The record gives the reactivity of an RNA of 177 nucleotides to DMS and 2A3.
RNA sequence: GGGAACGACUCGAGUAGAGUCGAAAAGAUAUGGAGUACUCUGAGCGGCUUCGUUUGACGUCGGAAACGACCGAGAAGAACUACCGUGUAAGAGUACUCCUAAGUCAAAGGUGGCUUCGGCCACCAACUUCGGUUAUAACUUCGGUUAUAACCGAAGAAAAGAAACAACAACAACAAC
Reactivity to DMS in 0.01 (KOAc 150mM, MgCl2 10mM, bicine 150mM(pH8.5), 24C), signal-to-noise 2, nucleotides 027 to 126: g010a100u010a300u000g000g030a030g020u000a030c000u000c000u010g000a300g000c010g020g010c170u000u000c000g000u010u000u010g040a300c300g000u020c000g010g030a090a050a210c040g010a010c020c010g000a290g000a020a050g000a020a010c100u000a080c010c010g020u000g040u000a220a040g000a000g000u000a010c000u000c020c020u010a010a060g010u000c030a050a060a210g020g040u000g000g000c000u010u000c160g050g010c000c000a000c000c000a010a020
Reactivity to 2A3 in 0.01 (KOAc 150mM, MgCl2 10mM, bicine 150mM(pH8.5), 24C), signal-to-noise 1, nucleotides 027 to 126: g020a030u100a030u160g020g000a000g010u030a020c010u000c030u020g080a060g040c000g000g120c110u090u040c060g230u100u070u090g030a010c020g000u020c000g030g000a060a120a050c040g020a020c050c000g030a040g030a050a040g000a070a020c060u090a040c140c010g010u100g020u140a000a000g020a000g010u000a010c030u000c000c010u010a010a010g000u010c010a060a050a130g000g000u010g000g050c000u090u130c300g100g000c050c000a020c000c000a010a000